An RNA of 177 nucleotides, treated with 2A3 and read out base by base. Values are in units of 0.01, from 0 to 300, in steps of 10. 2A3 adducts were read by reverse transcription with SuperScript II with manganese.
RNA sequence: GGGAACGACUCGAGUAGAGUCGAAAAGAGGGGCUUUGUGAAUAGGAUUGCUCUCACAUUAAAGAUAGUUACUUCAAUUUGAAGGCUGGAUUUAGGGAUUUUUUUUUUUCCUUAUAACAAAGACAUCAGCAAUUAGCUUCUUCGGAAGCUAAUUGCUAAAAGAAACAACAACAACAAC
Reactivity to 2A3 in 0.01 (KOAc 150mM, MgCl2 10mM, bicine 150mM(pH8.5), 24C), signal-to-noise 1, nucleotides 027 to 126: g150a030g000g090g100g020c000u080u020u020g040u020g020a170a070u090a040g010g010a050u010u020g080c000u030c000u000c020a120c000a130u110u200a020a030a020g050a010u030a030g050u180u300a080c000u100u080c110a150a300u110u240u300g000a000a000g000g020c000u080g030g010a030u000u020u020a130g010g000g040a040u170u030u010u010u100u000u000u000u000u000u170c010c000u150u000a100u030a130a000c000a010a040a010g040a000c050a020u040c050